[RMDB]
RNA sequence: GGGAACGACUCGAGUAGAGUCGAAAAAACGUUGCAUGAUCGUAAAACAUGCCCGGCUUACCGUGAGCCGCCUUUGAAAGAAAGGUUUACACGAACUCUGUUGCGUUACGCACGUACCUAACUUGUGAAAACGGCAUCUUGUUCGCAAGAUGCCGAAGAUCAUUAUUGACUUCGGUCAAUAAUGAUCAAAAGAAACAACAACAACAAC
Reactivity to 2A3 in 0.01 (KOAc 150mM, MgCl2 10mM, bicine 150mM(pH8.5), 24C), signal-to-noise 5, nucleotides 027 to 156: a000a000c000g000u000u000g000c000a000u000g020a060u180c040g070u180a070a150a000a000c000a000u000g000c000c000c000g000g010c000u010u040a100c040c040g050u050g050a000g000c000c000g030c000c000u020u010u010g060a100a060a010g020a000a010a000g020g000u040u060u040a030c020a000c010g050a110a040c080u110c090u160g070u090u040g010c010g030u040u040a060c200g000c030a010c020g020u020a030c000c030u050a070a120c040u060u080g030u040g120a020a030a010a020c010g000g000c000a000u000c000u000u010g020u030u030c090g010c110a000a000g000a000u000g000c000c000g000a000a000
Reactivity to DMS in 0.01 (KOAc 150mM, MgCl2 10mM, bicine 150mM(pH8.5), 24C), signal-to-noise 2, nucleotides 027 to 156: a050a080c020g000u030u000g000c000a030u000g020a060u010c030g040u000a060a110a050a020c040a010u000g030c000c060c000g010g000c020u010u010a090c050c100g020u020g010a050g030c000c020g050c000c000u000u000u000g020a170a100a200g030a120a050a020g020g020u000u010u000a140c090a070c110g020a040a070c100u000c090u000g020u000u000g000c010g000u000u010a100c040g000c080a060c120g020u000a060c030c020u000a060a080c050u010u000g020u000g010a120a080a120a190c000g000g000c000a030u000c020u000u000g000u000u000c300g030c050a000a020g000a040u020g010c010c010g000a010a040